[RMDB]
RNA sequence: GGGAACGACUCGAGUAGAGUCGAAAACAGCGUCUUGAGCAUCAACGAUUUGGUCGUAUUCAAUACUUCAACGUUAGCUUGAUAACUGCGUGAAGCUGAAAUGGUGUUCACCAUCUCGCCGGUCACACUUGAAAUUGCCAUUCGUGGCAAUUUCAAGAAAAGAAACAACAACAACAAC
Reactivity to 2A3 in 0.01 (KOAc 150mM, MgCl2 10mM, bicine 150mM(pH8.5), 24C), signal-to-noise 2, nucleotides 027 to 126: c030a000g030c000g040u050c020u080u100g050a000g030c030a040u030c030a040a040c030g100a080u100u030u240g160g030u040c040g000u010a150u040u060c040a070a020u020a170c020u000u000c020a110a100c030g030u180u260a040g010c030u000u100g060a030u080a130a010c000u060g000c000g040u000g000a020a000g000c020u020g020a010a070a020u100g000g000u010g050u120u060c040a010c020c010a060u000c030u020c040g020c020c010g050g080u060c000a030c010a010
Reactivity to DMS in 0.01 (KOAc 150mM, MgCl2 10mM, bicine 150mM(pH8.5), 24C), signal-to-noise 3, nucleotides 027 to 126: c060a090g000c050g040u010c080u000u010g010a050g010c020a040u000c050a120a080c040g010a060u000u010u010g030g000u000c060g040u010a230u000u020c100a050a040u000a090c020u010u000c020a060a070c020g000u010u010a050g020c020u000u050g020a160u020a080a150c020u000g010c030g020u000g000a030a020g050c040u000g000a050a050a120u000g010g000u000g010u000u010c070a060c150c040a040u000c040u000c050g010c030c030g000g020u000c050a060c130a100

Chemical mapping of a 177-nucleotide RNA with 2A3 and DMS. For DMS the reverse transcriptase was MarathonRT. For 2A3 the reverse transcriptase was SuperScript II with manganese. The RNA was probed in 150 mM KOAc, 10 mM MgCl2 and 150 mM bicine (pH 8.5) at 24 C.